[RMDB]
RNA sequence: GGGAACGACUCGAGUAGAGUCGAAAAUGCAAGAUCAGGGAAGAAUUCUACAUCCGAUACACCAAGGCCUAUCACAGGGCACCAGCCAUGAAUCUGGGUCAACUAGGACAGGGUUCCUACCUACGCCCACACGGGUAUACUUCGGUAUACCCGUGUGAAAAGAAACAACAACAACAAC
Reactivity to 2A3 in 0.01 (KOAc 150mM, MgCl2 10mM, bicine 150mM(pH8.5), 24C), signal-to-noise 2, nucleotides 027 to 126: u150g000c020a050a040g030a180u090c050a040g040g000g020a040a080g030a040a080u080u000c000u040a060c040a090u030c020c020g030a040u060a160c060a040c090c040a060a060g090g000c020c000u060a030u120c050a040c040a130g040g000g000c030a040c040c050a000g030c000c020a050u080g040a030a040u090c030u080g020g000g010u040c020a060a060c080u070a040g030g030a020c030a050g020g030g000u040u050c010c000u020a070c010c000u020a030c060g040c060c060
Reactivity to DMS in 0.01 (KOAc 150mM, MgCl2 10mM, bicine 150mM(pH8.5), 24C), signal-to-noise 3, nucleotides 027 to 126: u020g030c100a060a100g010a080u000c040a030g030g010g020a130a200g010a050a050u010u000c050u000a090c130a140u010c030c040g010a080u000a090c120a070c120c070a030a090g020g030c020c040u000a070u000c160a060c060a130g000g010g020c020a050c090c040a050g000c100c050a090u010g000a080a070u020c030u000g000g000g000u000c070a050a040c200u000a060g010g010a020c120a080g010g020g010u020u000c010c010u000a130c040c040u010a090c190g000c040c030